This 207-nucleotide RNA was probed chemically with 2A3. The reactions ran in a buffer of 150 mM KOAc, 10 mM MgCl2 and 150 mM bicine (pH 8.5), at 24 C. For 2A3 the reverse transcriptase was SuperScript II with manganese.
[RMDB]
RNA sequence: GGGAACGACUCGAGUAGAGUCGAAAAUAAUUUUCGAGUCAUCACAACUGACCUUGUCGUCCGUGCGGGGUAAGACCAUGGAGUUUCCCUUUUCUGUUACUCCUGAUAGCCCUAAGUGGCCAGUGAAGCGAAAAUGGGAAGGGAUAGAAUGUGGCUAUCAUCAUUGAUCCUUCGGGAUCAAUGAUGAAAAAGAAACAACAACAACAAC
Reactivity to 2A3 in 0.01 (KOAc 150mM, MgCl2 10mM, bicine 150mM(pH8.5), 24C), signal-to-noise 1, nucleotides 027 to 156: u100a000a020u110u060u100u080c030g010a010g090u050c080a090u120c090a030c060a210a040c080u050g000a070c090c020u010u090g030u030c010g010u010c010c000g110u140g120c070g000g030g090g000u080a120a000g000a010c000c000a000u040g010g010a060g020u000u040u000c000c000c000u010u000u010u040c030u020g030u080u010a000c000u000c020c020u060g020a050u220a030g000c010c000c000u100a300a040g040u300g100g010c000c000a040g000u060g300a100a000g010c080g110a060a000a000a100u070g000g010g020a000a000g020g000g030a030u040a070g100a020a050u120g000u000g050g000c020u020a000